[RMDB]
RNA sequence: GGGAACGACUCGAGUAGAGUCGAAAAGGGUUUGGAUUACAUCAAUAGUCACAUGAGCAGAAGUAAACAGAACAAGAAGUACAGCGGUUAUUCAAGUUCAAAGUUCACACUAUCGCAAUAAAUUGAAGCCAGUAUUCGGAUUCGUCCGAAUACUGGCAAAAGAAACAACAACAACAAC
Reactivity to DMS in 0.01 (KOAc 150mM, MgCl2 10mM, bicine 150mM(pH8.5), 24C), signal-to-noise 1, nucleotides 027 to 126: g000g000g040u000u000u000g040g000a100u000u000a170c100a090u000c050a070a150u000a030g000u040c150a030c050a030u000g010a070g000c020a060g030a070a190g000u010a050a030a080c050a060g000a050a050c090a020a250g010a090a020g000u000a060c050a070g010c080g000g010u010u000a050u020u030c080a000a210g040u000u000c030a040a100a170g020u000u000c030a040c100a060c090u000a060u000c130g000c080a030a090u010a030a050a070u010u010g020a020a030

Source information: Structure probing data (DMS) for a 177-nucleotide construct. The reactions ran in a buffer of 150 mM KOAc, 10 mM MgCl2 and 150 mM bicine (pH 8.5), at 24 C.